[RMDB]
RNA sequence: GGGAACGACUCGAGUAGAGUCGAAAAAGUUCUAGUCCUCACCUAAGAUCAGACUUACACGGCCCUCAAAGUAAGAGCACUGGGUUGGGCUUUGUGGUGGGGAUGAGUGUCUCAUUUUUAGUCCCAAAUUAAAAACGAGAUUUUGGGCUGUACAUCAAGUAUUAGCUCCAUUCGUGGAGCUAAUACUAAAAGAAACAACAACAACAAC
Reactivity to DMS in 0.01 (KOAc 150mM, MgCl2 10mM, bicine 150mM(pH8.5), 24C), signal-to-noise 2, nucleotides 027 to 156: a020g030u010u010c030u020a270g020u000c020c000u000c020a070c040c000u010a090a090g020a100u010c020a120g010a080c010u000u000a110c100a090c020g020g040c010c010c000u010c030a100a070a100g050u000a070a090g010a070g070c010a160c120u000g000g010g020u020u000g010g030g020c010u000u000u020g020u000g010g000u000g030g000g010g010a010u010g000a140g030u000g020u000c000u030c030a080u000u000u010u000u000a030g000u010c000c080c100a070a080a120u010u010a050a020a010a030a040c020g010a040g000a150u000u010u000u000g020g020g000c080u010g000u010a060c110a180u000c070a120
Source: RMDB library OK3TST, as collected in RNAgym. The record gives the reactivity of an RNA of 207 nucleotides to DMS. The RNA was probed in 150 mM KOAc, 10 mM MgCl2 and 150 mM bicine (pH 8.5) at 24 C.